[RMDB]
RNA sequence: GGGAACGACUCGAGUAGAGUCGAAAAAUUUGUUGGCACUCAAUCCGUUGACAUGUUAGCUGUCAAAACAGGCGUUGCUAUUGAACAGCUGCUUUAUGCGAUCCAACAACUGUAUACUGGGUUCCAGAGAGAGAAGAGUUCGCUCUUCUCAAAAGAAACAACAACAACAAC
Reactivity to DMS in 0.01 (KOAc 150mM, MgCl2 10mM, bicine 150mM(pH8.5), 24C), signal-to-noise 9, nucleotides 027 to 129: a050u000u000u010g000u000u000g000g030c300a090c120u030c100a080a070u050c050c030g030u000u000g000a080c200a030u000g020u030u030a020g000c000u010g030u020c010a000a020a080a090c170a050g010g010c120g030u050u030g030c070u000a090u040u000g000a080a040c010a010g000c020u010g020c040u030u030u020a070u060g030c080g020a070u020c000c020a010a020c000a020a060c160u000g010u030a060u010a070c080u010g010g010g030u020u010c030c010a080g000a100g030a150
Reactivity to 2A3 in 0.01 (KOAc 150mM, MgCl2 10mM, bicine 150mM(pH8.5), 24C), signal-to-noise 9, nucleotides 027 to 129: a010u070u050u050g010u000u010g020g010c080a030c090u090c040a050a120u050c060c040g030u040u080g050a070c040a110u070g030u100u190a020g000c000u000g000u010c000a000a020a050a070c100a050g100g020c130g210u180u240g010c020u080a080u080u040g040a060a010c000a010g010c000u030g000c010u070u080u050a090u130g050c040g030a030u050c010c010a010a010c000a020a020c050u070g050u110a070u030a150c060u080g100g000g000u040u020c010c010a030g010a000g000a000
Structure probing data (DMS and 2A3) for a 170-nucleotide construct. The reactions ran in a buffer of 150 mM KOAc, 10 mM MgCl2 and 150 mM bicine (pH 8.5), at 24 C. Reactivities are given for positions 27 through 129. It was measured as part of the RMDB library 15KLIB. For DMS, 66,478 sequencing reads were counted.